[RMDB]
Structure probing data (DMS and 2A3) for a 177-nucleotide construct. 2A3 adducts were read by reverse transcription with SuperScript II with manganese.

RNA sequence: GGGAACGACUCGAGUAGAGUCGAAAAGAACAUGCGUUCGCGCAUGUUCAAAUAAAAUCAGCGGUAAUCGAGGCGUAAAUAAUACCGCUGAACGCCUCGAUAAAAGAGCUGGCUUCGGCCAGCUCAACUAUCUACGAAAGUUCGCUUUCGUAGAUAGAAAAGAAACAACAACAACAAC
Reactivity to DMS in 0.01 (KOAc 150mM, MgCl2 10mM, bicine 150mM(pH8.5), 24C), signal-to-noise 4, nucleotides 027 to 126: g000a010a020c000a000u000g010c000g020u000u010c280g030c020g030c000a010u000g000u010u000c000a030a050a060u010a060a070a100a080u010c110a060g020c020g010g010u020a100a040u000c020g000a010g000g020c000g030u010a060a080a080u010a050a060u010a220c020c020g000c020u000g010a040a040c010g000c000c000u010c000g010a040u000a040a050a100a090g000a000g010c000u000g010g020c010u000u000c190g020g010c000c000a010g010c000u000c000a020a080
Reactivity to 2A3 in 0.01 (KOAc 150mM, MgCl2 10mM, bicine 150mM(pH8.5), 24C), signal-to-noise 2, nucleotides 027 to 126: g000a000a000c010a000u000g020c010g020u050u070c190g000c010g000c110a000u000g010u000u000c000a000a010a010u040a000a010a000a070u120c040a020g020c010g040g090u110a050a030u030c000g010a000g010g000c010g010u040a000a090a080u210a040a070u100a170c010c000g010c050u010g040a010a000c010g000c010c000u000c000g000a010u060a040a120a010a030g030a000g010c010u010g010g000c020u010u050c160g090g000c010c000a000g000c000u000c010a000a000